Chemical mapping of a 177-nucleotide RNA with 2A3 and DMS.
The reactions ran in a buffer of 150 mM KOAc, 10 mM MgCl2 and 150 mM bicine (pH 8.5), at 24 C.
[RMDB]
RNA sequence: GGGAACGACUCGAGUAGAGUCGAAAAGCGAGAUGAUCGCCGGUGCCACCCCGAUCCGUGCCUCGGUCAGCGCGAACGUGCUUUCCGGUCCGGCGACCACCAUGUCGCACGCACCGACCAGGCCGAAGGUGUAGACGGUCUUCGGACCGUCUACACCAAAAGAAACAACAACAACAAC
Reactivity to 2A3 in 0.01 (KOAc 150mM, MgCl2 10mM, bicine 150mM(pH8.5), 24C), signal-to-noise 1, nucleotides 027 to 126: g010c010g020a010g020a160u250g040a050u050c030g010c010c010g090g090u090g050c030c010a030c000c050c010c040g060a050u040c080c020g030u160g000c030c000u050c100g000g030u000c000a020g000c030g020c000g140a080a130c140g070u030g050c000u070u090u080c090c030g000g000u040c050c000g000g030c000g010a000c000c040a080c000c010a080u220g020u010c000g000c010a060c070g010c010a020c000c000g000a020c000c000a020g000g030c010c010g060a030a030
Reactivity to DMS in 0.01 (KOAc 150mM, MgCl2 10mM, bicine 150mM(pH8.5), 24C), signal-to-noise 1, nucleotides 027 to 126: g020c020g010a010g010a080u000g020a100u000c020g030c030c000g030g090u000g020c030c030a140c040c040c010c020g080a120u000c010c010g050u000g020c030c030u000c080g000g030u000c020a090g000c040g000c010g030a050a190c130g010u000g000c030u000u000u010c050c080g040g010u000c220c060g030g000c000g000a000c000c300a070c240c300a060u010g020u000c060g030c010a060c000g010c080a010c020c000g000a070c080c070a060g000g010c000c000g010a130a140